[RMDB]
RNA sequence: GGGAACGACUCGAGUAGAGUCGAAAAGAGGCCAAGAUUUCCAAUUGGCUGAUGAAGGUAAAACUAUUCAAGAAGAGAAUAAAGAUGUCGCUGAUUCUCAAAGCGAAAACCUAAACUAUGCUGAAGAGCUCGUAUAUUACUUCGGUAAUAUACGAGCAAAAGAAACAACAACAACAAC
Reactivity to DMS in 0.01 (KOAc 150mM, MgCl2 10mM, bicine 150mM(pH8.5), 24C), signal-to-noise 2, nucleotides 027 to 126: g000a170g000g010c000c000a030a050g010a080u030u010u050c150c190a200a170u000u000g020g000c030u000g040a070u000g000a080a010g000g000u000a040a130a070a170c090u000a020u000u000c010a060a110g010a140a120g000a070g000a050a020u010a060a030a190g020a170u020g010u010c000g000c000u020g000a080u000u020c000u020c050a080a070a010g020c010g000a000a030a100a120c040c020u000a090a060a110c200u000a020u000g000c010u000g000a070a050g000a070
Reactivity to 2A3 in 0.01 (KOAc 150mM, MgCl2 10mM, bicine 150mM(pH8.5), 24C), signal-to-noise 4, nucleotides 027 to 126: g140a020g020g000c010c000a010a010g120a200u120u090u140c030c030a050a080u020u030g000g000c040u060g010a080u090g100a080a050g020g000u100a090a050a030a040c020u020a100u010u110c060a080a010g100a100a030g110a110g010a060a030u080a120a050a060g070a080u190g030u070c020g000c000u000g010a110u140u000c050u010c000a070a050a000g000c010g030a020a040a020a010c000c020u060a050a000a000c040u180a120u280g000c020u070g040a150a060g000a070